The record gives the reactivity of an RNA of 177 nucleotides to 2A3. 2A3 adducts were read by reverse transcription with SuperScript II with manganese. For 2A3, 530 sequencing reads were counted.
RNA sequence: GGGAACGACUCGAGUAGAGUCGAAAAACAGAAUGCCAGGCCCUGAGCUUUCGGGCUGGAUCUCUGAGCAGCUAAUGACCGGAAGAAUUCCUGUAAGCGACAUCUUCUGUGAUAUUGAGAACAAUCCCCUGCCGAUGGAGUUCGCUCCAUCGGCAGGAAAAGAAACAACAACAACAAC
Reactivity to 2A3 in 0.01 (KOAc 150mM, MgCl2 10mM, bicine 150mM(pH8.5), 24C), signal-to-noise 2, nucleotides 027 to 126: a000c050a000g090a030a110u170g040c030c000a100g090g220c020c000c000u220g050a140g100c060u160u180u160c000g020g030g000c060u000g060g030a060u040c070u000c000u070g060a110g020c010a010g000c040u030a070a000u210g030a080c010c000g000g010a000a060g010a050a120u080u040c000c000u160g050u180a100a090g070c010g050a000c020a040u000c000u000u050c030u000g060u060g070a050u010a010u080u030g130a070g040a020a000c000a030a060u070c000c030